RNA sequence: GGGAACGACUCGAGUAGAGUCGAAAAACCGGCGUUUGACCCUGAGGCACUCAUACCGCCGGCUGGUUUAGAAUGCUAGCCCGUAUGAGUGCCUUUAGAAUGCUAGCGGUACGAGUGUCUCAGGGCCCCAUUAGGGGUAUUUCGAUACCCCUAAUGGAAAAGAAACAACAACAACAAC
Reactivity to DMS in 0.01 (KOAc 150mM, MgCl2 10mM, bicine 150mM(pH8.5), 24C), signal-to-noise 2, nucleotides 027 to 126: a110c040c010g020g020c170g000u000u000u000g000a070c000c020c010u000g010a000g000g010c000a010c000u000c000a070u000a010c000c010g010c020c060g020g000c000u000g000g000u010u030u000a110g000a140a120u020g010c010u010a080g000c050c010c050g000u030a050u020g010a080g030u000g000c030c010u000u010u010a020g000a180a080u020g010c010u000a130g020c010g010g000u000a010c080g000a040g020u000g000u000c010u000c000a010g000g000g000c030c050
Chemical mapping of a 177-nucleotide RNA with DMS.
The data come from the RNA Mapping Database (RMDB), libraries RFM100 and RFMREP.
Conditions: 150 mM KOAc, 10 mM MgCl2 and 150 mM bicine (pH 8.5), 24 C.